[RMDB]
Conditions: 150 mM KOAc, 10 mM MgCl2 and 150 mM bicine (pH 8.5), 24 C. Structure probing data (2A3 and DMS) for a 177-nucleotide construct. The data come from the RNA Mapping Database (RMDB), library OK1LIB. For 2A3 the reverse transcriptase was SuperScript II with manganese.
RNA sequence: GGGAACGACUCGAGUAGAGUCGAAAACGUCGUUUCGUGCCACCGUUCAACUGACCCGCAAGUGGCAGCGCGAGCUCGACUAUUCGCUACGCAAGAGUUUGUGGAGCUUCCACGACAACCGCAUUGCGCUUUAACGCCAAUUCGUUGGCGUUAAAGCAAAAGAAACAACAACAACAAC
Reactivity to 2A3 in 0.01 (KOAc 150mM, MgCl2 10mM, bicine 150mM(pH8.5), 24C), signal-to-noise 7, nucleotides 027 to 126: c060g020u010c020g010u020u070u040c050g020u090g040c010c020a020c030c020g040u090u090c050a120a060c070u100g120a160c000c020c030g030c050a090a080g040u070g060g000c020a010g000c030g000c010g020a020g020c020u030c040g060a030c020u020a070u030u070c030g020c060u070a090c050g030c070a060a060g030a010g070u050u090u210g020u060g030g020a050g070c020u150u020c010c000a020c020g070a030c030a060a040c040c020g040c100a080u030u230g040c040
Reactivity to DMS in 0.01 (KOAc 150mM, MgCl2 10mM, bicine 150mM(pH8.5), 24C), signal-to-noise 2, nucleotides 027 to 126: c210g000u060c000g010u000u020u000c050g040u020g020c030c020a060c060c110g000u020u010c090a060a110c060u000g010a050c010c050c130g000c040a050a130g010u020g000g010c050a090g040c010g030c040g000a010g000c030u000c000g000a060c060u000a140u010u010c040g000c020u020a030c040g000c060a070a070g000a110g020u000u030u020g040u020g010g000a080g000c120u010u000c070c000a030c030g000a040c070a060a100c080c060g040c070a110u020u030g000c250